RNA sequence: GGGAACGACUCGAGUAGAGUCGAAAAUACGUACGUAGCCGCGGCAUGCUAAUUACGUAGCUAAUUAUAGCGCAUUAGCCGAUUAGCGCCGAUGCUAGCUACGGCUACGUAUACGAUGCGCCGUAGCCCAGACGCUCUAUUUCGAUAGAGCGUCUGGAAAAGAAACAACAACAACAAC
Reactivity to 2A3 in 0.01 (KOAc 150mM, MgCl2 10mM, bicine 150mM(pH8.5), 24C), signal-to-noise 2, nucleotides 027 to 126: u070a000c050g040u000a000c000g010u010a030g060c000c000g060c020g020g000c010a030u180g000c030u030a020a060u160u060a060c070g040u090a080g000c000u020a010a050u050u070a180u160a130g090c080g000c050a050u100u130a020g000c010c020g050a060u000u070a020g000c020g020c050c030g010a020u070g000c000u050a160g010c020u020a030c010g000g000c000u000a000c010g010u010a010u000a010c000g050a050u120g020c050g030c020c080g060u010a020g030c000
Reactivity to DMS in 0.01 (KOAc 150mM, MgCl2 10mM, bicine 150mM(pH8.5), 24C), signal-to-noise 2, nucleotides 027 to 126: u010a050c090g020u000a010c030g040u000a000g050c010c000g040c040g000g020c030a220u000g000c020u000a130a070u000u020a070c120g000u000a060g000c000u000a030a020u000u030a160u000a100g020c090g010c120a130u010u010a040g010c040c070g010a100u000u000a010g010c010g000c080c050g000a110u010g020c040u010a210g020c010u000a060c010g020g000c000u000a010c050g000u010a000u020a050c150g000a100u010g020c060g000c000c020g020u000a100g010c140